[RMDB]
RNA sequence: GGGAACGACUCGAGUAGAGUCGAAAACUUUUGAGUGCAAGAGCGUAAGCGGGCUUGACUGCGAGGCCCACGAGCCGAGCAGGUGCGAAAGCAGGCUCUAGUGAUCCGGCGGCCCCACGUGGGAGGGGCAGGAAUGCUUGUUCGCAAGCAUUCCUGCAAAAGAAACAACAACAACAAC
Reactivity to DMS in 0.01 (KOAc 150mM, MgCl2 10mM, bicine 150mM(pH8.5), 24C), signal-to-noise 2, nucleotides 027 to 126: c020u000u050u020u000g000a080g020u020g040c120a010a070g000a120g000c090g000u020a090a070g000c090g000g000g000c010u020u020g010a150c000u000g010c000g000a300g000g000c010c030c100a080c260g010a100g020c000c020g010a300g020c030a040g000g030u020g020c050g000a050a070a100g000c010a070g020g000c030u000c000u010a060g010u010g000a060u000c020c000g000g040c010g000g000c000c000c000c040a120c190g070u000g000g000g000a100g000g010g020
Reactivity to 2A3 in 0.01 (KOAc 150mM, MgCl2 10mM, bicine 150mM(pH8.5), 24C), signal-to-noise 3, nucleotides 027 to 126: c020u100u050u140u220g060a040g040u120g020c010a060a040g020a030g010c010g130u170a070a040g020c050g050g080g000c010u030u070g030a070c010u000g020c000g030a050g000g000c000c000c070a090c100g020a020g000c000c020g000a010g010c010a000g020g030u020g050c050g070a160a000a000g010c010a000g040g000c010u000c000u050a040g020u040g040a050u020c010c010g000g000c000g060g010c020c010c010c010a080c020g040u170g000g040g010a050g020g000g090